Source information: The record gives the reactivity of an RNA of 177 nucleotides to DMS and 2A3. The 2A3 profile rests on 2,174 reads.
[RMDB]
RNA sequence: GGGAACGACUCGAGUAGAGUCGAAAAAUGAACUAUAAAAUAGACUUUUUGAGAAUUGUGUGUAGUCAUGAGCAUUUUGUAGCCUUAAACUUGCCGUUUGGUACUUCAUACACAAUGGUAACAGCGCCCAACUAUAGGAGUUCGCUCCUAUAGUUGGAAAAGAAACAACAACAACAAC
Reactivity to DMS in 0.01 (KOAc 150mM, MgCl2 10mM, bicine 150mM(pH8.5), 24C), signal-to-noise 3, nucleotides 027 to 126: a060u010g010a100a160c020u020a030u010a040a050a060a250u000a120g010a170c020u000u000u000u010u000g020a090g010a090a100u000u000g030u000g010u010g000u000a070g020u000c050a030u010g000a050g010c030a070u000u000u000u000g010u000a030g000c050c040u010u000a070a060a090c140u010u010g010c030c050g010u000u000u000g000g000u000a020c110u020u000c150a120u000a050c040a030c060a030a020u000g000g000u000a040a030c110a070g010c150g010c180
Reactivity to 2A3 in 0.01 (KOAc 150mM, MgCl2 10mM, bicine 150mM(pH8.5), 24C), signal-to-noise 3, nucleotides 027 to 126: a000u040g020a040a030c010u010a020u140a180a090a040a050u110a100g170a300c020u140u140u050u100u190g130a070g040a160a090u160u140g050u000g020u040g030u140a060g040u020c030a040u040g020a030g030c010a020u040u030u040u110g090u060a020g050c000c030u100u190a080a160a080c040u010u050g000c010c000g050u070u080u030g020g000u010a030c010u020u110c040a030u050a120c040a010c010a070a050u040g000g000u030a080a010c010a030g040c000g050c030